[RMDB]
RNA sequence: GGGAACGACUCGAGUAGAGUCGAAAAGUUUCCCUUCCCACAGCUAUCAUCCGGACUAGCAUUUCCUGUACAUACUAGGGAAGGGAAAUGGAGAGAGUGUAUAAUGAAUUGCAUGCUUGAUUGCUGAGCAGCCGGAUUGAUUCGUCAAUCCGGCUGCAAAAGAAACAACAACAACAAC
Reactivity to 2A3 in 0.01 (KOAc 150mM, MgCl2 10mM, bicine 150mM(pH8.5), 24C), signal-to-noise 1, nucleotides 027 to 126: g010u000u000u000c000c000c020u000u020c060c000c000a170c020a000g090c070u020a000u050c030a000u000c010c010g110g000a120c040u100a000g090c060a130u150u030u040c010c000u000g000u000a020c010a020u020a000c010u050a080g000g000g020a010a000g000g000g000a000a000a000u000g040g000a060g090a000g020a020g030u130g060u040a050u030a200a190u110g230a060a100u140u080g020c000a000u030g000c020u060u060g080a190u000u120g040c040u010g060a020